[RMDB]
RNA sequence: GGGAACGACUCGAGUAGAGUCGAAAAUAAAGUCGAAAGUUGUAACGUGAACCCUCUGCACUACUUCUUCUGUUGCAGGAAGAAUUCCUUUUGACUCAGUUCAUAACACAUUUUCUGAUGCCCUGAUAUGCCUUAGGCCCAGUGCUGGGUUCUGGAGAGUACCAAUUCUUUUCGAAGAAUUGGUACUAAAAGAAACAACAACAACAAC
Reactivity to DMS in 0.01 (KOAc 150mM, MgCl2 10mM, bicine 150mM(pH8.5), 24C), signal-to-noise 2, nucleotides 027 to 156: u010a090a100a120g010u000c030g010a070a090a120g020u000u010g040u000a090a080c070g030u000g000a040a080c030c000c010u000c080u000g050c060a090c030u000a100c080u010u000c020u000u000c020u010g020u010u000g020c180a290g000g010a020a040g010a060a070u010u010c040c020u000u000u020u000g010a050c040u000c020a170g020u000u010c050a070u010a060a060c090a040c040a110u000u000u020u000c050u010g020a060u010g030c020c030c010u000g050a080u020a040u020g020c000c030u000u000a080g020g010c060c010c030a070g040u000g030c010u000g000g000g000u010u000c000u000g040g020a300g010
Reactivity to 2A3 in 0.01 (KOAc 150mM, MgCl2 10mM, bicine 150mM(pH8.5), 24C), signal-to-noise 4, nucleotides 027 to 156: u110a010a070a020g060u060c030g050a090a030a020g030u070u060g040u110a150a100c110g040u050g030a020a020c010c000c010u030c140u080g000c000a000c020u060a050c000u090u010c000u040u020c030u060g070u120u140g070c050a010g000g000a010a010g010a010a030u110u130c010c000u040u110u040u170g030a020c010u020c070a020g040u100u070c040a070u140a270a050c050a020c040a140u100u070u140u030c040u090g060a060u070g020c010c020c000u030g050a080u030a070u240g040c030c020u050u070a020g000g020c000c050c040a030g000u030g020c020u020g010g020g000u010u020c000u010g020g040a150g020